[RMDB]
RNA sequence: GGGAACGACUCGAGUAGAGUCGAAAAGAUUUACGGCGGGAAACGCGCCGAGGUCUCGGCUGCGGCACCGACCGAAAGGCGCGGAAAGGUCCCGUGUGCGGCACCGACCGAAACCGCCGGAAAGAAACGAGUCAUCAUAUUUCGAUAUGAUGACUCGAAAAGAAACAACAACAACAAC
Reactivity to DMS in 0.01 (KOAc 150mM, MgCl2 10mM, bicine 150mM(pH8.5), 24C), signal-to-noise 3, nucleotides 027 to 126: g020a180u000u010u000a090c000g000g000c040g020g000g000a060a100a120c010g000c010g010c010c000g000a160g010g010u000c060u010c100g050g040c040u010g020c080g040g010c020a260c060c060g000a050c010c000g000a030a170a210g010g010c000g020c020g000g000a050a100a190g000g000u000c030c110c150g000u010g040u010g010c110g000g000c090a050c050c160g010a050c010c010g000a050a090a200c010c010g000c020c000g000g000a020a020a020g010a080a120a150